[RMDB]
RNA sequence: GGGAACGACUCGAGUAGAGUCGAAAACUCGAGGGCCUUCCUUCGUCGGUGAUCCUGCCUCUCCUUGUCGGAGAACCCUCCCCUGAGAGGCCUCUUCCUAGGCCCGGAGUCUACCUCCAUCUGGUCUGUUCGGGCCUUCUUCGCCGGGGGAGCCCCCCCUAGAGUUACGGUUCGCCGUAACUCUAGGAAAAGAAACAACAACAACAAC
Reactivity to 2A3 in 0.01 (KOAc 150mM, MgCl2 10mM, bicine 150mM(pH8.5), 24C), signal-to-noise 1, nucleotides 027 to 156: c020u020c020g000a040g000g040g040c000c090u140u150c080c020u030u080c070g060u050c050g030g080u080g000a120u030c030c000u060g040c040c020u020c010u030c030c030u090u200g210u250c080g020g000a050g070a080a060c060c020c000u020c010c010c020c000u020g010a020g000a000g040g000c010c000u080c050u120u020c020c050u080a020g010g010c000c010c010g010g000a020g030u020c070u100a050c050c000u010c040c010a110u110c150u180g020g040u000c020u020g060u030u030c010g000g010g060c040c000u010u020c020u010u080c010g070c090c050g020g000g000g000g000a000g030c000c000c000c020c000
Chemical mapping of a 207-nucleotide RNA with 2A3.
The reactions ran in a buffer of 150 mM KOAc, 10 mM MgCl2 and 150 mM bicine (pH 8.5), at 24 C.
The 2A3 profile rests on 875 reads.